Chemical mapping of a 207-nucleotide RNA with 2A3 and DMS. Values cover nucleotides 27 to 156. DMS adducts were read by reverse transcription with MarathonRT. For 2A3 the reverse transcriptase was SuperScript II with manganese. The RNA was probed in 150 mM KOAc, 10 mM MgCl2 and 150 mM bicine (pH 8.5) at 24 C.

RNA sequence: GGGAACGACUCGAGUAGAGUCGAAAAUCAGAAUCAGGCCGGAGUGUUUAGCGCUCCGUAAACACGGUCGUACAUCCAGCCGGUAGCCUGGUUCCUUGCAUUGAGUGAUGUACGGAGUUUAUAGAGGAAAAGAAAGACCUGUUCGCAGGUCUUUCAACCUUUACCUUCUCUUCGGAGAAGGUAAAGGAAAAGAAACAACAACAACAAC
Reactivity to 2A3 in 0.01 (KOAc 150mM, MgCl2 10mM, bicine 150mM(pH8.5), 24C), signal-to-noise 2, nucleotides 027 to 156: u050c000a010g000a000a000u020c000a000g000g000c020c000g000g010a010g010u030g060u060u210u290a190g110c020g020c000u020c000c000g000u030a020a020a010c190a050c050g020g010u040c020g000u040a010c000a030u000c050c020a020g010c000c000g000g020u010a020g000c020c010u000g000g000u000u000c000c020u030u150g020c000a140u060u170g060a080g060u120g000a010u020g000u010a020c010g030g060a120g000u090u230u000a190u100a090g070a060g080g090a160a150a050a100g000a000a000a000g000a010c000c000u020g000u020u050c250g000c090a020g000g000u000c000u000u010u000c000a000a010
Reactivity to DMS in 0.01 (KOAc 150mM, MgCl2 10mM, bicine 150mM(pH8.5), 24C), signal-to-noise 1, nucleotides 027 to 156: u000c060a050g010a030a000u000c020a040g040g020c030c030g020g020a060g040u010g000u010u010u000a220g030c050g050c000u010c000c030g000u010a000a020a130c070a080c070g000g010u010c060g060u010a070c010a050u020c010c010a230g050c010c050g000g000u010a100g030c040c010u010g050g020u000u000c000c020u000u000g010c150a200u000u030g010a110g030u010g010a060u000g000u000a030c020g040g010a140g000u020u000u000a120u000a070g010a150g030g000a060a100a140a150g010a000a010a000g000a020c000c000u000g020u000u010c200g040c030a020g030g020u000c010u000u000u000c000a090a060